An RNA of 177 nucleotides, treated with DMS and read out base by base.
The data come from the RNA Mapping Database (RMDB), library TTRINS.
The RNA was probed in 150 mM KOAc, 10 mM MgCl2 and 150 mM bicine (pH 8.5) at 24 C.
[RMDB]
RNA sequence: GGGAACGACUCGAGUAGAGUCGAAAAGAUAUGGACAGCAUCAAAUAGAAAUCCCGUGGCGAGCGAGUGUCGGAAACGACAUAAUCGCGAUGAGCCGAGGGAUUUCUAUUUGAUGCUGUCCUAAGUCGAAUAACAACAUGUUCGCAUGUUGUUAUUCAAAAGAAACAACAACAACAAC
Reactivity to DMS in 0.01 (KOAc 150mM, MgCl2 10mM, bicine 150mM(pH8.5), 24C), signal-to-noise 3, nucleotides 027 to 126: g010a100u010a300u000g010g010a010c000a030g000c000a000u000c000a000a010a010u000a010g010a010a010a010u000c010c010c000g020u010g000g030c000g000a180g010c000g000a030g000u010g010u010c000g040g000a130a100a250c010g000a000c000a010u000a100a130u000c010g020c010g000a160u010g000a300g030c000c000g010a100g000g010g020a010u000u000u000c000u000a010u000u000u000g000a000u010g010c000u010g000u000c000c000u000a000a060g000u000c130